[RMDB]
Record summary:
An RNA of 177 nucleotides, treated with DMS and 2A3 and read out base by base. It was measured as part of the RMDB library OK2TST.

RNA sequence: GGGAACGACUCGAGUAGAGUCGAAAAUUAUAUCUGUAGAUCACCCCACAGUAACCAUGUGAUAGUCCAAUUUGAGAGUAUUCCUUUAUCUGUCACAAAACAUCUUAUUAGAGUGUAGAAGGGAUUCUCUACCACGCAAAUUCGUUUGCGUGGUAGAAAAAGAAACAACAACAACAAC
Reactivity to DMS in 0.01 (KOAc 150mM, MgCl2 10mM, bicine 150mM(pH8.5), 24C), signal-to-noise 2, nucleotides 027 to 126: u000u000a140u010a040u010c000u000g000u000a070g010a060u000c140a080c100c050c010c060a050c080a090g000u000a090a060c140c090a130u000g060u010g010a060u000a010g030u000c160c100a080a110u000u000u000g000a070g010a070g000u010a050u010u000c010c000u000u000u000a080u030c040u010g000u000c020a020c040a060a050a040a080c120a100u000c040u000u010a140u000u000a040g010a100g000u000g000u000a070g010a040a030g000g000g000a030u000u000c060
Reactivity to 2A3 in 0.01 (KOAc 150mM, MgCl2 10mM, bicine 150mM(pH8.5), 24C), signal-to-noise 1, nucleotides 027 to 126: u090u020a130u000a060u130c040u000g130u130a070g000a150u180c030a160c050c000c020c000a060c000a030g040u010a010a050c040c040a080u030g060u020g040a020u010a050g030u070c070c040a020a080u140u200u210g060a070g010a000g020u060a060u010u070c030c000u000u040u010a120u010c070u030g070u080c010a000c070a070a160a110a000c050a090u020c040u150u170a240u130u140a110g050a010g170u010g040u050a030g010a000a020g030g040g020a040u080u000c000
For 2A3 the reverse transcriptase was SuperScript II with manganese. The DMS profile rests on 1,048 reads.